Background: The record gives the reactivity of an RNA of 207 nucleotides to 2A3 and DMS. For 2A3 the reverse transcriptase was SuperScript II with manganese. Reactivities are rounded to 0.1 and cut off at 0 and 3.

RNA sequence: GGGAACGACUCGAGUAGAGUCGAAAAGCGUGGUGGUGUGUGCCUGUAAUCCUAGCUACUCGGGAGGCUGAGGCAGAAGAAUCGCUUGAACCCGGGAGGUGGAGCCUACAGUGAGUCAACAUGAAGCCAGUGCACGCCAGCCUGGGCGACAGACUCACCUAGCCUAAUUAUUCGUAAUUAGGCUAGGAAAAGAAACAACAACAACAAC
Reactivity to 2A3 in 0.01 (KOAc 150mM, MgCl2 10mM, bicine 150mM(pH8.5), 24C), signal-to-noise 2, nucleotides 027 to 156: g090c050g040u040g000g000u020g010g060u040g030u060g000u020g040c010c000u030g050u070a040a050u020c010c030u020a030g010c010u100a100c040u020c030g050g020g000a050g040g000c090u070g040a020g040g010c060a010g040a070a010g030a050a060u070c060g020c050u000u060g060a040a060c010c010c000g000g010g000a030g000g030u050g000g050a030g000c020c020u080a060c010a030g020u010g040a030g010u050c050a110a100c040a180u110g080a050a020g020c010c000a020g030u060g120c040a020c130g050c000c010a000g000c040c000u030g000g050g030c010g010a020c020a080g010a010c000u000c000a000
Reactivity to DMS in 0.01 (KOAc 150mM, MgCl2 10mM, bicine 150mM(pH8.5), 24C), signal-to-noise 2, nucleotides 027 to 156: g010c030g040u010g030g030u000g000g040u000g040u000g040u000g040c000c030u000g030u010a060a080u020c020c010u000a070g020c020u000a060c030u000c050g060g000g020a060g010g020c060u000g020a050g010g010c000a080g010a070a060g000a070a070u000c020g010c050u000u010g020a070a110c020c010c020g000g010g000a100g040g010u000g030g000a070g040c030c000u000a080c120a070g010u020g010a080g030u000c020a060a110c070a100u010g000a120a230g010c020c020a090g030u010g000c040a090c060g030c080c020a140g050c070c030u010g000g000g000c040g000a140c070a090g010a060c030u000c010a110